Structure probing data (2A3) for a 207-nucleotide construct.
RNA sequence: GGGAACGACUCGAGUAGAGUCGAAAAAAAGGACAUGGUGGCCAGGUUAAUUGCCUCGGGUACGGUCACAACGUGAAGGAUGUUCCAAUGGGCAAUCCGCAGCCAAGCCCCUACGUGUAGUGUCUGUAAUACUACAGACAUUUCAUAUGGGGAAGGUGAUACGUUGCUUCUUCGGAAGCAACGUAUCAAAAGAAACAACAACAACAAC
Reactivity to 2A3 in 0.01 (KOAc 150mM, MgCl2 10mM, bicine 150mM(pH8.5), 24C), signal-to-noise 1, nucleotides 027 to 156: a000a000a000g130g000a100c090a060u100g000g110u060g000g030c000c040a050g020g040u090u080a170a020u150u110g000c000c010u010c050g090g000g000u040a010c020g100g000u100c020a010c030a090a030c120g030u080g040a050a010g120g020a050u120g140u170u110c020c050a030a090u270g050g010g000c010a020a050u010c000c020g000c070a000g000c000c030a060a030g030c030c000c000c000u020a020c030g010u020g020u030a000g000u000g000u020c000u000g010u020a050a130u060a300c100u010a000c000a000g010a000c000a000u010u010u040c040a020u050a020u080g000g040g010g000a000a010g030g000u100
Values are in units of 0.01, from 0 to 300, in steps of 10.